[RMDB]
RNA sequence: GGGAACGACUCGAGUAGAGUCGAAAACGUGGUUCGCCACGGACGGAGAUAUGGAUGAUCUACCCACCAACAAACGUCAUCGAUCUCGUUUCGGAAACGAAACGAGGGAGACGGUAGUUGAGGAUCAUCCUAAGUCCCCCCAGCAGUUCGCUGCUAAAAAUCACCUAUUGUUCGCAAUAGGUGAUUUAAAAGAAACAACAACAACAAC
Reactivity to DMS in 0.01 (KOAc 150mM, MgCl2 10mM, bicine 150mM(pH8.5), 24C), signal-to-noise 4, nucleotides 027 to 156: c010g030u000g020g020u010u010c300g050c000c020a000c010g020g020a120c060g020g020a090g020a070u000a230u000g020g000a040u010g020a010u000c010u000a050c040c010c030a300c100c000a020a030c010a040a120a250c020g010u000c000a190u010c160g010a130u000c000u000c000g010u020u000u010c000g020g000a120a060a260c010g010a010a000a010c000g000a010g000g000g000a100g000a010c010g000g000u000a150g030u000u000g000a100g030g000a040u000c000a020u000c000c000u000a000a110g000u010c010c000c000c000c010c030a120g020c040a070g020u000u010c170g030c020u000g020c000u000a010a080
Reactivity to 2A3 in 0.01 (KOAc 150mM, MgCl2 10mM, bicine 150mM(pH8.5), 24C), signal-to-noise 8, nucleotides 027 to 156: c000g000u010g000g070u050u080c300g080c070c000a000c000g000g020a020c070g090g030a290g010a080u060a030u080g000g000a000u000g000a000u000c000u040a160c080c080c050a040c030c000a020a000c020a030a300a010c000g010u010c000a190u300c070g030a080u020c010u000c000g000u000u000u000c010g010g020a040a050a060c010g000a000a000a010c000g000a000g000g010g000a020g000a010c000g020g000u060a050g000u010u000g000a010g010g000a000u000c000a000u000c000c000u000a030a010g040u000c000c000c010c000c010c000a000g000c000a000g020u070u230c230g020c130u000g000c010u040a240a190